[RMDB]
RNA sequence: GGGAACGACUCGAGUAGAGUCGAAAAGUCUCCCGAUUCGUCGGGAGACCGAGAAAUUCAGGUGAUUUGCUACCUUUAAGUGCAGGUAGAAAUUCAAAGGAAACACCAUGGCGUUCGCGCCAUGGAAUGUUCUACGCCAAUUCGUUGGCGUAGAACAAAAAGAAACAACAACAACAAC
Reactivity to 2A3 in 0.01 (KOAc 150mM, MgCl2 10mM, bicine 150mM(pH8.5), 24C), signal-to-noise 1, nucleotides 027 to 126: g000u000c010u010c000c010c010g020a010u060u060c130g000u000c010g010g000g010a020g000a020c000c000g010a030g060a010a180a070u130u100c070a000g130g000u050g090a030u010u000u080g110c000u030a050c000c000u090u100u190a300a080g120u110g090c080a000g040g000u020a010g000a010a000a000u080u060c030a000a060a080g090g000a020a140a040c010a000c040c000a000u010g010g030c010g030u050u030c160g000c000g030c000c010a000u000g000g010a020a020
Reactivity to DMS in 0.01 (KOAc 150mM, MgCl2 10mM, bicine 150mM(pH8.5), 24C), signal-to-noise 1, nucleotides 027 to 126: g020u000c000u000c000c000c000g020a020u000u000c240g020u000c000g020g010g020a000g000a010c050c000g020a090g010a240a080a080u010u000c010a040g030g030u010g000a000u010u000u000g000c010u000a010c000c010u000u000u000a070a090g040u010g040c140a020g000g020u000a020g010a010a040a030u010u000c060a060a110a140g010g000a010a020a080c200a120c040c010a000u000g020g010c000g010u000u000c190g030c000g020c010c000a000u000g000g000a050a030
Chemical mapping of a 177-nucleotide RNA with 2A3 and DMS. For DMS, 1,046 sequencing reads were counted. Reactivities are given for positions 27 through 126. DMS adducts were read by reverse transcription with MarathonRT. As a SHAPE reagent, 2A3 marks flexible, mostly unpaired nucleotides at the ribose 2'-OH. The RNA was probed in 150 mM KOAc, 10 mM MgCl2 and 150 mM bicine (pH 8.5) at 24 C.